Structure probing data (2A3 and DMS) for a 177-nucleotide construct. The RNA was probed in 150 mM KOAc, 10 mM MgCl2 and 150 mM bicine (pH 8.5) at 24 C. For 2A3 the reverse transcriptase was SuperScript II with manganese. It was measured as part of the RMDB library VIROID.
[RMDB]
RNA sequence: GGGAACGACUCGAGUAGAGUCGAAAAUUUUCACCCUUCCUUUAGUUUCCUUCCUCUCCUGGAGAGGUCUUCUGCCCUAGCCCGGUCUUCGAAGCUUCCUUUGGCUACUACCCGGUGGAAACAACUGCAUACCGUAAUACUUCGGUAUUACGGUAUGAAAAGAAACAACAACAACAAC
Reactivity to 2A3 in 0.01 (KOAc 150mM, MgCl2 10mM, bicine 150mM(pH8.5), 24C), signal-to-noise 2, nucleotides 027 to 126: u030u010u070u130c040a110c050c000c000u040u050c020c000u110u060u070a030g020u020u080u090c020c000u050u070c010c000u050c000u030c010c070u060g020g040a030g000a030g060g000u010c000u060u000c040u030g030c010c020c020u030a020g020c020c000c010g030g010u020c020u080u040c080g050a040a010g010c000u030u050c000c000u070u050u090g030g000c000u040a060c000u040a040c070c010c010g050g000u030g020g060a050a060a020c010a010a030c070u080g020
Reactivity to DMS in 0.01 (KOAc 150mM, MgCl2 10mM, bicine 150mM(pH8.5), 24C), signal-to-noise 4, nucleotides 027 to 126: u010u000u010u000c080a140c040c020c020u010u000c020c020u010u020u000a080g000u000u000u010c010c020u000u000c020c010u010c030u010c010c100u000g010g010a080g010a060g000g010u000c040u000u000c040u000g010c030c020c040u000a130g020c040c040c060g010g010u000c040u000u000c050g000a090a140g000c050u000u000c040c040u010u000u000g010g010c040u000a060c050u000a090c060c020c010g000g020u000g010g000a100a040a040c080a050a090c140u000g000